RNA sequence: GGGAACGACUCGAGUAGAGUCGAAAAUGGUGACAGGAGUCAAGGCCACUUGGUUUUCAGAGACUGGUAGUUCCCAAGACAGAGUGAGCUGCCGUGCUGAACCCUCACCGGCCUCGAAGGGUUCCUCCGGUUAAGGGGGUUUCGACCCCCUUAACCGAAAAGAAACAACAACAACAAC
Reactivity to DMS in 0.01 (KOAc 150mM, MgCl2 10mM, bicine 150mM(pH8.5), 24C), signal-to-noise 1, nucleotides 027 to 126: u030g020g000u000g000a100c130a120g010g020a130g030u000c010a130a070g000g000c050c020a170c120u000u010g050g000u000u000u010u000c000a050g030a100g000a090c020u020g000g030u000a020g030u000u000c000c060c000a100a090g000a090c220a210g020a070g030u020g000a030g000c020u000g020c040c040g000u000g000c020u000g000a010a030c300c010c050u020c070a020c110c050g000g000c050c010u000c130g010a110a100g000g000g010u000u000c000c030u000c120
This 177-nucleotide RNA was probed chemically with DMS. The DMS profile rests on 575 reads. The RNA was probed in 150 mM KOAc, 10 mM MgCl2 and 150 mM bicine (pH 8.5) at 24 C. DMS adducts were read by reverse transcription with MarathonRT. Values are in units of 0.01, from 0 to 300, in steps of 10.